[RMDB]
The record gives the reactivity of an RNA of 177 nucleotides to 2A3. For 2A3 the reverse transcriptase was SuperScript II with manganese. Values cover nucleotides 27 to 126. It was measured as part of the RMDB library OK1LIB.
RNA sequence: GGGAACGACUCGAGUAGAGUCGAAAAUUAUAUCAAGUUAUUGGGUGUUGAUUAUAUUUGGUUAACACCAGUGUAUGAAUCACCUAUGAAUGAUAAUGGCUAUGAUAUCAGCAAUUAUUUAGAAAUCGUCGCACGUUCAAUUCGUUGAACGUGCGACAAAAGAAACAACAACAACAAC
Reactivity to 2A3 in 0.01 (KOAc 150mM, MgCl2 10mM, bicine 150mM(pH8.5), 24C), signal-to-noise 1, nucleotides 027 to 126: u060u010a000u000a000u070c000a030a000g000u000u020a060u190u300g000g050g000u070g000u280u000g000a070u000u020a000u060a040u120u180u000g000g000u000u000a050a000c000a070c100c000a000g000u000g000u000a000u000g040a000a130u060c000a010c040c050u160a130u140g120a190a120u060g140a000u080a060a070u000g000g000c000u060a170u300g000a000u000a000u000c000a000g080c010a110a110u030u020a060u300u210u050a130g210a060a210a110u200c110